Source: RMDB library OK3TST, as collected in RNAgym. Chemical mapping of a 207-nucleotide RNA with DMS and 2A3. For DMS, 2,424 sequencing reads were counted. High 2A3 reactivity points to a flexible backbone, as in loops and unpaired stretches.

RNA sequence: GGGAACGACUCGAGUAGAGUCGAAAAUGACAAUGAAACUGCAGGAGGCACAAAGUACAGACUUGUAGGAGUGCUUGUACACAGUGGUCAAGCAAGCGGUGGGCAUUAUUAUUCUUACAUCAUUCAAAGGAAUGGUAAAGAUGAUCAGACAGAUCAACUCCCAUACCAUGUUCGCAUGGUAUGGGAGAAAAGAAACAACAACAACAAC
Reactivity to DMS in 0.01 (KOAc 150mM, MgCl2 10mM, bicine 150mM(pH8.5), 24C), signal-to-noise 2, nucleotides 027 to 156: u010g010a100c050a110a080u000g000a090a070a090c030u010g030c000a110g010g030a170g080g010c060a130c080a010a050a120g040u020a020c020a130g030a100c160u000u040g030u000a060g010g020a190g040u000g000c020u000u000g010u010a050c000a050c050a150g000u000g040g040u020c040a020a170g020c030a040a110g000c000g040g020u000g000g020g000c010a110u010u000a060u000u000a100u000u020c020u000u000a090c110a040u000c030a020u000u000c000a110a130a080g030g050a010a020u000g000g020u010a050a050a110g010a100u040g010a050u000c010a230g000a110c120a100g040a060u000c020a010a160
Reactivity to 2A3 in 0.01 (KOAc 150mM, MgCl2 10mM, bicine 150mM(pH8.5), 24C), signal-to-noise 2, nucleotides 027 to 156: u170g020a000c060a000a080u070g030a040a080a080c040u060g010c010a020g000g040a040g000g060c030a010c000a050a070a000g040u060a020c000a040g090a060c020u030u110g050u090a060g000g070a010g030u060g000c000u050u050g030u050a000c050a000c020a100g100u060g080g000u020c000a000a000g000c010a020a020g010c050g020g000u030g000g040g020c040a000u000u090a050u010u010a010u060u110c020u010u010a020c010a030u080c000a000u010u090c030a240a040a120g220g000a010a010u000g000g010u030a010a010a010g020a000u040g000a000u050c010a040g170a250c040a020g010a020u000c000a020a040